The record gives the reactivity of an RNA of 177 nucleotides to DMS and 2A3. For 2A3, 4,738 sequencing reads were counted. The RNA was probed in 150 mM KOAc, 10 mM MgCl2 and 150 mM bicine (pH 8.5) at 24 C. For DMS the reverse transcriptase was MarathonRT.

[RMDB]
RNA sequence: GGGAACGACUCGAGUAGAGUCGAAAAUUUUGAGCUUUCGAGCUCAAAACAACUGGUGUCCCGACCAGGAAAAACAGAUUUACACGAAGUGAAAGAUCGAUAGGGCCACCAUGUUCGCAUGGUGGAACACAUCGAGUUGAUUCGUCAACUCGAUGUGAAAAGAAACAACAACAACAAC
Reactivity to DMS in 0.01 (KOAc 150mM, MgCl2 10mM, bicine 150mM(pH8.5), 24C), signal-to-noise 4, nucleotides 027 to 126: u000u000u000u010g000a010g000c000u000u000u020c180g010a020g020c000u000c000a010a000a020a040c260a100a100c000u010g010g010u000g020u000c010c010c010g010a110c010c010a010g010g010a060a020a050a050a050c130a150g010a030u000u000u000a290c020a060c020g000a090a150g010u000g000a040a100a110g000a030u000c020g010a140u020a110g020g010g000c000c000a000c000c000a000u000g000u000u010c200g020c000a010u000g000g000u000g000g000a020a050
Reactivity to 2A3 in 0.01 (KOAc 150mM, MgCl2 10mM, bicine 150mM(pH8.5), 24C), signal-to-noise 4, nucleotides 027 to 126: u030u020u000u010g000a000g000c000u080u040u200c290g090a000g010c010u000c000a000a010a000a010c020a040a130c000u000g000g030u010g040u010c010c000c000g010a010c010c000a000g060g110a050a070a010a000a010c040a030g060a040u110u100u190a020c070a010c120g230a300a060g020u030g070a110a050a040g040a050u060c050g070a080u110a170g100g010g000c000c000a000c010c010a000u000g030u020u030c170g020c110a000u000g000g000u000g000g010a010a010